RNA sequence: GGGAACGACUCGAGUAGAGUCGAAAACAGGAGAAUCGCUUGAACUUGGGAGGCGGAGGUUGUGGUGAGCCAAGAUUGUGCCAUUGCACUCCAACCUGGGCAACAAGAGUGAAACUCCGUCUCAAAACAUAGCCUACGAAUUCGUUCGUAGGCUAUGAAAAGAAACAACAACAACAAC
Reactivity to DMS in 0.01 (KOAc 150mM, MgCl2 10mM, bicine 150mM(pH8.5), 24C), signal-to-noise 4, nucleotides 027 to 126: c220a140g020g010a030g010a060a250u000c030g030c010u000u010g010a140a130c110u010u010g010g010g010a050g010g000c220g000g000a010g000g000u000u010g030u010g010g010u000g010a100g030c010c030a110a180g010a150u010u000g010u010g010c020c040a050u000u000g020c010a130c020u000c010c010a110a070c010c000u000g020g000g000c050a050a070c090a060a110g000a030g000u010g010a040a060a270c000u000c010c020g010u000c020u000c020a060a050a070a140
Reactivity to 2A3 in 0.01 (KOAc 150mM, MgCl2 10mM, bicine 150mM(pH8.5), 24C), signal-to-noise 3, nucleotides 027 to 126: c030a010g000g010a000g030a030a010u020c010g000c030u040u030g020a060a070c020u040u040g040g030g040a060g100g110c100g000g020a010g050g030u170u150g040u050g010g030u020g010a070g000c020c030a120a060g260a300u200u190g040u130g020c000c010a010u010u050g020c020a040c010u000c010c000a070a090c030c000u020g000g140g000c030a090a050c020a150a000g040a030g070u100g030a030a010a000c010u010c000c010g000u010c010u000c000a100a120a010a010

The record gives the reactivity of an RNA of 177 nucleotides to DMS and 2A3. It was measured as part of the RMDB library OK2TRN. The reactions ran in a buffer of 150 mM KOAc, 10 mM MgCl2 and 150 mM bicine (pH 8.5), at 24 C.